[RMDB]
RNA sequence: GGGAACGACUCGAGUAGAGUCGAAAAGACGACUAUCCGCCGGUGCGUUCACCGCGUCAGGCGGCUUCGGUGAGGUGAGUAAUUUGGUCAUUAACUUGGUCAUGCCGCCGCCGAUGUUGAGCGGAGGCGCGGGAAAGGGAUUCGUCCCUUUCCCGCGAAAAGAAACAACAACAACAAC
Reactivity to DMS in 0.01 (KOAc 150mM, MgCl2 10mM, bicine 150mM(pH8.5), 24C), signal-to-noise 5, nucleotides 027 to 126: g000a070c030g020a110c070u000a100u000c010c000g020c020c020g000g010u000g020c130g010u000u010c160a140c180c030g000c040g020u010c040a100g020g010c020g010g010c080u000u000c020g000g010u010g010a150g020g020u000g010a110g020u000a040a090u000u010u000g010g000u000c030a020u000u000a070a140c130u000u000g000g000u000c020a050u000g000c020c010g010c010c000g010c000c010g000a040u000g010u000u000g010a100g000c000g010g010a050g010g000
Reactivity to 2A3 in 0.01 (KOAc 150mM, MgCl2 10mM, bicine 150mM(pH8.5), 24C), signal-to-noise 5, nucleotides 027 to 126: g040a010c040g030a050c030u070a060u050c010c020g000c000c000g040g020u050g000c040g040u130u300c100a070c170c020g010c010g030u030c070a150g010g000c000g000g010c000u030u020c010g030g000u060g130a110g040g050u040g030a180g050u100a110a220u120u080u120g010g010u010c010a010u010u060a050a080c300u030u040g000g000u020c000a020u050g000c010c010g020c010c000g000c000c000g020a020u030g030u060u090g040a050g010c010g010g050a060g070g000